Chemical mapping of a 177-nucleotide RNA with DMS and 2A3. The data come from the RNA Mapping Database (RMDB), library M2PK50. The reactions ran in a buffer of 150 mM KOAc, 10 mM MgCl2 and 150 mM bicine (pH 8.5), at 24 C. The DMS profile rests on 2,899 reads.
[RMDB]
RNA sequence: GGGAACGACUCGAGUAGAGUCGAAAAUCGGGUUUCUUCGGAAACCCGAAAAUAAAAUCAGCGGUUAAAAAGCUCGCGUUAAAACCGCUGAACGCGAGCUUAAAAGAUCGCAGUUCGCUGCGAUCAACAUUGCUAUAUGGUUCGCCAUAUAGCAAUGAAAAGAAACAACAACAACAAC
Reactivity to DMS in 0.01 (KOAc 150mM, MgCl2 10mM, bicine 150mM(pH8.5), 24C), signal-to-noise 3, nucleotides 027 to 126: u000c010g030g000g010u000u000u000c000u000u010c140g010g000a010a010a010c000c000c000g000a000a020a040a090u010a070a080a140a090u000c090a040g000c050g010g000u000u000a050a120a120a040a020g000c010u000c000g010c000g010u000u010a040a060a110a140c030c050g000c040u000g010a020a000c020g010c000g000a010g000c000u000u000a040a110a090a100g000a010u000c000g030c020a010g020u000u000c240g010c010u000g000c000g000a000u000c000a080a140
Reactivity to 2A3 in 0.01 (KOAc 150mM, MgCl2 10mM, bicine 150mM(pH8.5), 24C), signal-to-noise 2, nucleotides 027 to 126: u020c010g000g000g010u010u020u010c020u060u060c180g070g010a010a010a000c010c000c000g000a000a000a000a000u000a000a040a010a040u070c020a010g030c010g070g070u110u180a190a260a090a000a000g000c000u000c000g010c020g010u000u030a080a210a040a030c010c000g000c060u020g030a000a000c000g000c000g000a000g000c020u010u030a030a020a020a010g010a000u000c000g000c010a010g020u020u030c250g000c090u010g010c010g000a000u000c000a000a000